The data come from the RNA Mapping Database (RMDB), library OK2TST. An RNA of 177 nucleotides, treated with DMS and 2A3 and read out base by base. For 2A3, 1,567 sequencing reads were counted.
RNA sequence: GGGAACGACUCGAGUAGAGUCGAAAAUUAACUAGAAUGAUGUCGACUACUGACACAUUCCGAGAGAUCGGAGAUGAUAAUUAUGACUUCAUGUUCCAAUCAUUGUUAAUCUAUUCACAGAUUGUGGGUGGCAGUAGUAUUUCGAUACUACUGCCACAAAAGAAACAACAACAACAAC
Reactivity to DMS in 0.01 (KOAc 150mM, MgCl2 10mM, bicine 150mM(pH8.5), 24C), signal-to-noise 3, nucleotides 027 to 126: u020u010a020a040c040u010a070g000a050a000u000g010a120u000g000u000c000g020a170c230u000a090c190u010g000a010c010a080c000a040u000u000c000c050g010a110g000a140g000a060u000c030g000g000a040g020a010u000g000a030u000a030a130u010u010a070u020g010a120c190u000u000c020a010u010g000u010u000c030c000a050a030u000c020a120u000u000g000u000u000a020a040u010c070u010a110u000u000c020a030c050a060g000a150u000u000g030u000g000g010
Reactivity to 2A3 in 0.01 (KOAc 150mM, MgCl2 10mM, bicine 150mM(pH8.5), 24C), signal-to-noise 3, nucleotides 027 to 126: u030u010a030a020c020u000a020g070a050a020u080g240a250u030g020u010c010g040a090c080u240a020c070u240g050a010c010a010c000a010u000u000c000c010g060a080g000a000g020a100u000c040g000g030a030g000a020u040g040a010u020a120a060u210u250a150u280g090a060c050u000u000c010a010u030g140u110u000c010c000a020a000u020c030a050u000u100g040u050u020a060a020u000c080u060a080u120u150c100a040c040a080g220a300u110u170g030u060g050g020
Record summary
The reactions ran in a buffer of 150 mM KOAc, 10 mM MgCl2 and 150 mM bicine (pH 8.5), at 24 C.